[RMDB]
RNA sequence: GGGAACGACUCGAGUAGAGUCGAAAAGAUAUGGAUUCGGGGGAGCUUGGACAUCGGAAACGAUGUAGAGAGCGAAGAACCACGAAUCCUAAGUCAAAAGAGCUCAGAACUUCGGUUCUGAGCUCAACAUUAUGGCAUACUUCGGUAUGCCAUAAUGAAAAGAAACAACAACAACAAC
Reactivity to 2A3 in 0.01 (KOAc 150mM, MgCl2 10mM, bicine 150mM(pH8.5), 24C), signal-to-noise 3, nucleotides 027 to 126: g000a010u000a010u030g000g010a000u010u000c000g000g000g000g000g000a000g000c010u040u100g110g110a030c010a000u000c000g000g000a000a000a010c000g000a000u010g000u020a050g150a020g000a000g090c040g130a300a000g000a000a000c020c000a300c200g010a000a000u000c000c000u000a000a010g010u000c010a000a000a070a250g000a010g000c000u010c000a000g010a010a000c000u060u150c300g070g000u020u000c000u000g000a010g000c000u000c000a000a000
Reactivity to DMS in 0.01 (KOAc 150mM, MgCl2 10mM, bicine 150mM(pH8.5), 24C), signal-to-noise 4, nucleotides 027 to 126: g010a030u000a020u010g000g000a020u000u000c000g010g010g000g010g000a020g020c000u000u000g010g010a060c000a010u000c000g010g000a010a010a030c000g020a010u000g000u000a050g010a300g010a020g020c010g000a070a140g000a140a240c010c000a080c010g000a020a000u000c000c000u000a000a060g000u010c010a100a060a140a150g000a010g000c000u000c000a000g010a010a010c000u000u010c190g030g010u000u010c000u000g000a010g010c010u000c000a000a050